RNA sequence: GGGAACGACUCGAGUAGAGUCGAAAAGAUAUGGAGUCCUGACAUGCUCGAUUGGAUCGGAAACGAUCUAGAGAGCAACAGCAGGCUCCUAAGUCAAAAGUUCGAUUCCCUUCGGGGAAUCGAACAACAGGAACGAUAUGUUCGCAUAUCGUUCCUGAAAAGAAACAACAACAACAAC
Reactivity to DMS in 0.01 (KOAc 150mM, MgCl2 10mM, bicine 150mM(pH8.5), 24C), signal-to-noise 3, nucleotides 027 to 126: g010a050u010a300u000g000g020a010g020u010c010c030u000g000a090c060a180u020g010c000u000c000g000a300u000u010g010g000a010u000c000g000g000a150a110a200c020g010a000u010c000u000a020g000a300g010a010g000c010a010a050c220a140g000c010a020g000g000c010u000c000c000u000a010a110g000u000c040a060a070a140a120g000u010u000c010g010a030u000u000c000c000c000u000u030c170g050g020g010g000a010a000u000c000g000a000a000c010a060a090
Reactivity to 2A3 in 0.01 (KOAc 150mM, MgCl2 10mM, bicine 150mM(pH8.5), 24C), signal-to-noise 1, nucleotides 027 to 126: g040a030u080a080u130g000g020a010g040u240c020c020u030g030a080c060a100u060g010c000u000c020g160a190u060u300g070g000a000u000c000g020g000a060a070a020c000g000a000u010c010u000a010g020a000g000a000g050c020a000a000c020a010g110c010a010g020g000c000u000c000c000u010a100a020g050u000c040a010a080a010a160g010u000u030c000g000a020u000u000c000c000c000u000u060c280g020g000g000g050a000a000u000c010g010a010a010c000a000a000